[RMDB]
RNA sequence: GGGAACGACUCGAGUAGAGUCGAAAACGGCCAAACACAGAACUAAAAGAAAAAAUCCAACGGUGGCUUGCAGAGAGGAAACAACAAAAGGAGCAACUUGAAUAGAUACUGUGAACUAACCAAACCAACUCGUACAGUAAUUCGUUACUGUACGAGUAAAAGAAACAACAACAACAAC
Reactivity to DMS in 0.01 (KOAc 150mM, MgCl2 10mM, bicine 150mM(pH8.5), 24C), signal-to-noise 4, nucleotides 027 to 126: c110g000g030c030c020a080a140a080c050a030c050a040g010a100a080c070u000a040a110a050a140g000a010a010a030a060a110a120u020c040c040a060a140c110g000g000u010g000g010c030u000u000g020c060a030g000a010g040a070g000g000a040a060a040c090a080a040c150a020a050a090a050g030g010a050g020c080a050a060c050u020u040g000a050a110u030a050g010a070u020a030c030u000g030u000g000a050a020c090u010a080a200c030c020a040a030a110c060c090a090
Reactivity to 2A3 in 0.01 (KOAc 150mM, MgCl2 10mM, bicine 150mM(pH8.5), 24C), signal-to-noise 9, nucleotides 027 to 126: c050g070g000c010c010a050a060a010c040a010c010a030g070a120a050c050u100a070a050a080a040g220a070a130a040a020a020a030u060c040c010a060a040c040g060g010u040g020g020c000u020u050g050c060a020g060a010g020a020g110g070a110a120a030c040a030a020c010a030a120a030a030g040g000a040g030c030a010a040c020u050u060g060a080a030u090a080g060a030u130a130c030u030g020u020g050a010a010c020u010a020a010c020c000a070a040a020c020c010a010

Chemical mapping of a 177-nucleotide RNA with DMS and 2A3.
The data come from the RNA Mapping Database (RMDB), library OK1LIB.
For DMS the reverse transcriptase was MarathonRT.
The reactions ran in a buffer of 150 mM KOAc, 10 mM MgCl2 and 150 mM bicine (pH 8.5), at 24 C.